[RMDB]
RNA sequence: GGGAACGACUCGAGUAGAGUCGAAAAUCAAUGCGAUGAUGCAGGAGAUUGCGUCCUGGACGGUAACUUCUGCGGAGUAUGUCCGGUCAUCGGGCGGCUGGGAAACCCGUUGGUUCGCCAACGGGAACAUUCUAUCACAGUUCGCUGUGAUAGAAUGAAAAGAAACAACAACAACAAC
Reactivity to DMS in 0.01 (KOAc 150mM, MgCl2 10mM, bicine 150mM(pH8.5), 24C), signal-to-noise 4, nucleotides 027 to 126: u000c070a120a090u000g010c020g000a060u000g010a100u010g010c000a020g010g000a030g000a140u000u000g010c010g000u000c010c120u010g020g000a020c000g010g010u000a030a060c010u000u000c010u000g010c030g000g000a100g010u010a040u000g020u000c020c010g020g010u000c110a090u010c070g010g000g010c050g000g010c040u000g000g000g010a130a110a150c010c000c000g010u000u000g010g010u000u020c210g010c010c000a000a010c010g010g000g000a020a050
Reactivity to 2A3 in 0.01 (KOAc 150mM, MgCl2 10mM, bicine 150mM(pH8.5), 24C), signal-to-noise 5, nucleotides 027 to 126: u090c040a040a060u080g020c010g180a220u050g010a010u050g020c010a010g030g020a020g020a130u070u130g050c010g030u070c070c170u080g120g080a020c020g010g110u090a050a010c010u010u020c000u010g000c010g010g010a010g010u060a060u110g020u010c010c020g000g070u160c070a120u210c050g020g020g040c050g020g000c040u070g030g000g040a050a100a090c000c000c000g000u000u000g020g000u030u030c140g030c090c000a000a000c000g020g000g010a000a000